[RMDB]
RNA sequence: GGGAACGACUCGAGUAGAGUCGAAAAACGAAACCCAAGGUGCAUGCCGAGGUGCGGUAGGCCUCGUUACCAAACCGCAAAAAAAUAGUCGCAAACGACGAAAACUACGCACUCGCAGCUUAAUAACAGUAGGGUCCCUACUUCGGUAGGGACCCAACAAAUUCUCCUUGUUCGCAAGGAGAAUUUGAAAAGAAACAACAACAACAAC
Reactivity to 2A3 in 0.01 (KOAc 150mM, MgCl2 10mM, bicine 150mM(pH8.5), 24C), signal-to-noise 2, nucleotides 027 to 156: a000c050g030a080a010a010c000c000c000a050a050g110g030u090g000c070a070u060g000c120c090g040a060g000g040u040g040c020g040g070u030a010g050g020c000c010u000c030g010u020u020a070c000c080a060a040a040c030c050g000c080a000a000a000a000a000a020a160u170a030g020u040c030g010c020a060a090a050c050g020a000c020g050a010a060a000a000c010u030a000c000g010c000a020c030u040c040g020c000a010g000c010u120u130a130a030u120a220a040c050a090g070u180a120g110g000g000u000c000c000c000u000a000c010u010u070c140g050g000u000a000g000g000g020a000c000c000c000a000a000
Reactivity to DMS in 0.01 (KOAc 150mM, MgCl2 10mM, bicine 150mM(pH8.5), 24C), signal-to-noise 2, nucleotides 027 to 156: a270c050g000a160a100a170c000c000c010a080a220g000g010u000g000c070a100u000g010c030c000g010a050g020g050u010g030c020g020g020u000a090g020g010c030c000u010c080g060u000u000a070c050c040a040a050a120c050c020g060c090a010a010a070a120a100a080a180u000a040g000u000c050g000c070a050a110a130c050g020a030c010g020a030a060a060a070c010u000a040c000g000c030a050c010u000c060g000c040a080g020c050u000u000a040a080u000a060a120c070a110g030u010a110g000g080g000u000c000c000c000u000a010c010u000u010c250g010g000u000a020g000g000g010a000c010c020c000a000a010

Chemical mapping of a 207-nucleotide RNA with 2A3 and DMS. The reactions ran in a buffer of 150 mM KOAc, 10 mM MgCl2 and 150 mM bicine (pH 8.5), at 24 C. 2A3 adducts were read by reverse transcription with SuperScript II with manganese.